[RMDB]
Overview
This 177-nucleotide RNA was probed chemically with 2A3 and DMS. For DMS the reverse transcriptase was MarathonRT. The RNA was probed in 150 mM KOAc, 10 mM MgCl2 and 150 mM bicine (pH 8.5) at 24 C. Reactivities are given for positions 27 through 126.
RNA sequence: GGGAACGACUCGAGUAGAGUCGAAAAGAUAUGGAGCGUUAUUUGCGCUUUCUAUAAUCGGAAACGAUUAUGAAAGAACUACGCAUUCACGCUCCUAAGUCAAAACCCGUAGGUUCGCCUACGGGAAGAGUACUUAGGAGUUCGCUCCUAAGUACUCAAAAGAAACAACAACAACAAC
Reactivity to 2A3 in 0.01 (KOAc 150mM, MgCl2 10mM, bicine 150mM(pH8.5), 24C), signal-to-noise 4, nucleotides 027 to 126: g010a010u060a030u150g010g000a000g000c010g000u050u060a160u110u140u100g010c070g000c010u000u010u000c020u060a000u010a000a000u000c000g020g000a030a030a020c020g000a000u010u000a010u030g020a020a030a020g020a100a070c180u230a050c300g010c000a000u000u020c040a000c000g010c000u000c000c010u010a080a010g020u010c010a020a040a120a220c010c000c000g000u000a000g040g030u020u080c300g090c120c010u010a000c000g010g000g000a020a020
Reactivity to DMS in 0.01 (KOAc 150mM, MgCl2 10mM, bicine 150mM(pH8.5), 24C), signal-to-noise 3, nucleotides 027 to 126: g000a020u010a300u010g010g000a000g000c000g010u000u000a070u010u000u000g000c010g040c000u000u000u010c000u020a010u000a000a000u000c000g020g000a130a120a190c000g010a010u000u000a000u000g000a030a010a030g000a090a090c140u020a300c010g000c010a000u000u000c240a010c010g000c000u000c000c000u010a010a020g010u000c020a100a040a110a160c000c000c000g020u000a000g000g000u000u030c260g020c000c000u000a000c000g000g000g000a000a030